[RMDB]
Description: Structure probing data (2A3 and DMS) for a 177-nucleotide construct. 2A3 adducts were read by reverse transcription with SuperScript II with manganese. The reactions ran in a buffer of 150 mM KOAc, 10 mM MgCl2 and 150 mM bicine (pH 8.5), at 24 C.
RNA sequence: GGGAACGACUCGAGUAGAGUCGAAAAUGCGCGGCAAGAUCGCCGCGGGCGCGCCCAUCGCCGAAGUGUUAGACCAAACUCAGGCCUAGAGCUGACCUAGGUGGCAGCGGGCGCCCUGGUCGUCGGCCGCUGCAUCGGAGUUCGCUCCGAUGCAGCGAAAAGAAACAACAACAACAAC
Reactivity to 2A3 in 0.01 (KOAc 150mM, MgCl2 10mM, bicine 150mM(pH8.5), 24C), signal-to-noise 2, nucleotides 027 to 126: u120g000c020g010c000g020g000c040a060a120g120a300u150c100g030c010c010g000c000g000g030g000c040g000c010g000c000c020c000a020u080c060g000c010c010g020a120a050g060u130g060u130u100a090g040a120c010c100a080a090a050c050u070c120a070g260g000c020c010u060a050g000a030g050c020u030g050a110c000c010u020a030g000g060u040g030g050c020a010g070c000g020g010g020c010g010c020c000c010u090g090g000u100c090g010u010c010g000g020c020
Reactivity to DMS in 0.01 (KOAc 150mM, MgCl2 10mM, bicine 150mM(pH8.5), 24C), signal-to-noise 6, nucleotides 027 to 126: u010g020c010g020c000g020g030c020a150a120g000a100u010c220g020c010c000g020c020g010g000g000c130g020c010g000c000c000c010a120u010c140g000c000c010g010a130a090g020u010g000u000u000a090g020a130c140c140a080a080a060c080u000c090a130g000g020c010c010u000a040g000a160g010c020u010g000a020c030c000u000a050g020g020u010g010g020c020a130g010c140g010g000g010c020g010c010c010c010u000g010g010u010c080g000u000c010g010g010c020
Reactivities are rounded to 0.1 and cut off at 0 and 3. Source: RMDB library OK2TRN, as collected in RNAgym.